[RMDB]
RNA sequence: GGGAACGACUCGAGUAGAGUCGAAAAUCUAAUCCAAUUAAUGCUGGAAUUGGGAACAGCAGAAGUGUCAUCUCAGAGCUACUCACAAUGAAAGGUGAUGUCUGGGGCUCAGGUGUGUUGAGGUCCCAGUAAGACACUGGUUCGCCAGUGUCUUACUAAAAGAAACAACAACAACAAC
Reactivity to DMS in 0.01 (KOAc 150mM, MgCl2 10mM, bicine 150mM(pH8.5), 24C), signal-to-noise 3, nucleotides 027 to 126: u000c080u030a120a100u010c040c010a060a070u000u010a070a090u000g020c070u010g010g000a050a070u000u000g000g010g010a130a090c070a050g010c040a040g000a070a090g030u010g020u000c070a040u000c050u000c080a080g000a090g020c050u010a090c110u010c050a060c050a050a070u010g010a060a090a080g010g000u000g010a060u010g000u000c060u010g010g010g000g020c040u000c040a040g010g010u000g000u000g010u000u000g000a070g010g010u000c000c000c020
Reactivity to 2A3 in 0.01 (KOAc 150mM, MgCl2 10mM, bicine 150mM(pH8.5), 24C), signal-to-noise 2, nucleotides 027 to 126: u020c020u050a050a080u030c020c030a010a060u110u130a130a080u080g050c030u030g090g110a130a160u130u130g080g000g050a030a050c000a000g000c030a010g040a120a020g130u090g040u090c030a120u010c000u000c040a020g020a020g130c020u040a070c000u000c020a030c020a090a260u150g090a300a070a040g180g000u020g000a040u110g050u070c020u040g020g000g010g100c050u050c050a040g060g060u120g000u050g040u140u060g050a060g000g040u000c000c000c000